[RMDB]
RNA sequence: GGGAACGACUCGAGUAGAGUCGAAAAGUGGUAUCGCAUUUAGCCCCCCUUCGUACCAAUUCUGUUUUCGUCUCAAGCUCUUCAUUACUACAGCGCAAGUCUACCAUUACCACACCCACACACAGAUGACAUUACCUUUGUUCGCAAAGGUAAUGUCAAAAGAAACAACAACAACAAC
Reactivity to DMS in 0.01 (KOAc 150mM, MgCl2 10mM, bicine 150mM(pH8.5), 24C), signal-to-noise 3, nucleotides 027 to 126: g000u000g020g010u020a020u020c120g000c130a100u040u030u000a100g000c020c000c000c020c030c040u040u090c000g030u000a040c090c070a040a060u020u000c080u000g000u010u010u010u000c030g000u010c040u030c030a090a150g000c000u000c000u010u000c070a040u010u000a040c040u000a100c150a040g020c100g000c060a060a110g000u010c030u010a050c010c030a090u010u000a020c010c050a000c150a120c020c000c010a080c210a050c080a060c110a070g030a190u010
Reactivity to 2A3 in 0.01 (KOAc 150mM, MgCl2 10mM, bicine 150mM(pH8.5), 24C), signal-to-noise 6, nucleotides 027 to 126: g090u080g020g030u080a050u200c080g010c100a060u050u100u160a070g010c000c000c000c000c000c000u010u050c030g040u020a050c000c010a040a110u100u070c020u050g080u020u020u030u050c040g020u000c020u010c030a070a050g020c010u000c000u130u040c030a060u060u140a060c040u020a040c030a020g010c010g000c050a060a010g020u010c010u030a060c000c020a040u000u080a010c000c010a020c000a030c010c030c010a010c000a010c000a000c010a050g090a080u100